[RMDB]
The data come from the RNA Mapping Database (RMDB), library TTRDES. This 177-nucleotide RNA was probed chemically with 2A3 and DMS. For 2A3, 16,252 sequencing reads were counted.
RNA sequence: GGGAACGACUCGAGUAGAGUCGAAAAGAUAUGGAAUCUAGGUAGACAUGCAGUACAUUCGGAAACGAAUGGACUGCAACAGCUACUAGAUUCCUAAGUCAAACUUGAGCUCUUCGGAGCUCAAGAACUUAACAGAGAAGUUCGCUUCUCUGUUAAGAAAAGAAACAACAACAACAAC
Reactivity to 2A3 in 0.01 (KOAc 150mM, MgCl2 10mM, bicine 150mM(pH8.5), 24C), signal-to-noise 5, nucleotides 027 to 126: g000a000u020a010u040g000g000a010a000u000c000u000a010g300g150u030a010g060a080c120a300u300g020c000a000g000u010a010c000a000u000u000c000g000g000a000a020a020c010g000a010a000u000g000g010a000c000u000g000c010a010a000c020a010g000c010u010a010c000u000a010g010a000u000u000c000c000u010a010a000g000u000c030a090a070a170c000u000u010g000a000g010c000u000c010u080u160c300g130g010a000g000c000u000c000a000a000g000a000a010
Reactivity to DMS in 0.01 (KOAc 150mM, MgCl2 10mM, bicine 150mM(pH8.5), 24C), signal-to-noise 5, nucleotides 027 to 126: g010a010u000a060u010g000g000a020a000u000c000u000a030g000g000u010a000g000a030c130a140u010g010c000a010g000u000a020c000a010u000u000c010g020g000a020a020a040c000g000a010a010u000g000g000a010c000u000g000c000a020a020c150a170g000c010u000a020c000u000a010g000a010u000u000c000c000u000a000a060g000u000c010a140a140a250c010u000u000g010a010g010c000u000c000u000u020c260g040g000a010g000c000u000c000a000a010g000a090a160
Conditions: 150 mM KOAc, 10 mM MgCl2 and 150 mM bicine (pH 8.5), 24 C. Values are in units of 0.01, from 0 to 300, in steps of 10.